[RMDB]
RNA sequence: GGGAACGACUCGAGUAGAGUCGAAAAACAAGGACGAAGAAGUAACGUGUAAUGAUGAUAAAACGUUGUGCAACGGCAAAUACGGCGGCACAAGCAAAAGCGUAUUGACCAAUUUUGCACGCGGACGCCAGCGUGGCUAGUUCGCUAGCCACGCUGGAAAAGAAACAACAACAACAAC
Reactivity to 2A3 in 0.01 (KOAc 150mM, MgCl2 10mM, bicine 150mM(pH8.5), 24C), signal-to-noise 2, nucleotides 027 to 126: a000c070a040a020g190g000a040c000g000a000a110g110a130a000g060u130a220a000c060g040u090g000u030a020a010u150g250a080u040g010a080u090a030a130a000a000c000g000u100u300g000u200g000c000a000a010c110g000g000c050a000a150a000u030a000c060g000g000c010g000g000c220a060c200a290a000g110c040a000a000a090a000g150c000g030u020a030u010u020g140a300c000c000a120a110u300u000u060u000g000c000a000c000g050c000g000g060a060c140g000
Reactivity to DMS in 0.01 (KOAc 150mM, MgCl2 10mM, bicine 150mM(pH8.5), 24C), signal-to-noise 2, nucleotides 027 to 126: a110c110a080a000g000g000a090c100g030a050a050g010a080a060g060u010a050a100c010g000u000g000u050a040a070u000g000a010u040g020a040u050a070a020a070a090c010g000u000u110g060u000g030c020a030a070c300g010g000c220a000a060a020u010a010c000g010g060c050g050g000c100a090c250a060a080g050c080a100a070a120a160g010c000g000u000a000u030u030g000a160c050c050a070a030u080u010u000u000g010c010a000c000g000c070g000g020a070c160g000
This 177-nucleotide RNA was probed chemically with 2A3 and DMS.
The 2A3 profile rests on 688 reads.
The RNA was probed in 150 mM KOAc, 10 mM MgCl2 and 150 mM bicine (pH 8.5) at 24 C.